[RMDB]
RNA sequence: GGGAACGACUCGAGUAGAGUCGAAAAGGGGUCAGCUCUUGGGAGGCGGACCGAGGUGGGACUGAAGCCUCCACGGUCCCACUACCCACCGGUCCGAACUACCUCACUUGAGCUGACGGAGGCACCCAAAAGAUCACGUGGUUCGCCACGUGAUCAAGCCUACUAUAUUGUUCGCAAUAUAGUAGGCAAAAGAAACAACAACAACAAC
Reactivity to DMS in 0.01 (KOAc 150mM, MgCl2 10mM, bicine 150mM(pH8.5), 24C), signal-to-noise 1, nucleotides 027 to 156: g000g020g060g050u000c020a090g000c010u000c000u000u000g000g020g040a120g030g050c000g000g000a010c010c000g000a140g030g000u000g010g000g000a090c030u000g020a090a100g010c000c020u010c000c010a300c130g040g000u000c000c000c020a050c030u000a050c040c010c030a300c070c000g000g010u000c000c000g000a030a050c070u000a140c020c000u020c020a010c020u000u020g020a010g030c000u020g000a030c010g070g040a020g090g000c020a050c010c030c000a060a080a090a160g000a000u000c000a000c000g020u000g010g030u000u020c300g000c020c020a010c000g000u020g000a000u020c010a040a160
Reactivity to 2A3 in 0.01 (KOAc 150mM, MgCl2 10mM, bicine 150mM(pH8.5), 24C), signal-to-noise 2, nucleotides 027 to 156: g080g000g030g010u000c000a000g000c000u010c000u010u000g010g000g010a000g010g010c000g010g000a000c000c000g000a010g000g010u010g000g000g000a000c000u000g030a130a010g010c000c000u000c010c000a000c010g000g010u010c010c020c010a000c010u060a060c040c080c020a030c000c010g010g010u000c010c000g000a030a010c040u230a090c120c000u000c000a010c000u000u000g000a000g000c000u000g000a000c010g000g000a000g010g000c000a020c000c000c000a050a140a010a090g000a000u000c000a000c000g000u000g000g050u050u050c090g060c110c000a000c000g010u010g000a000u000c000a000a000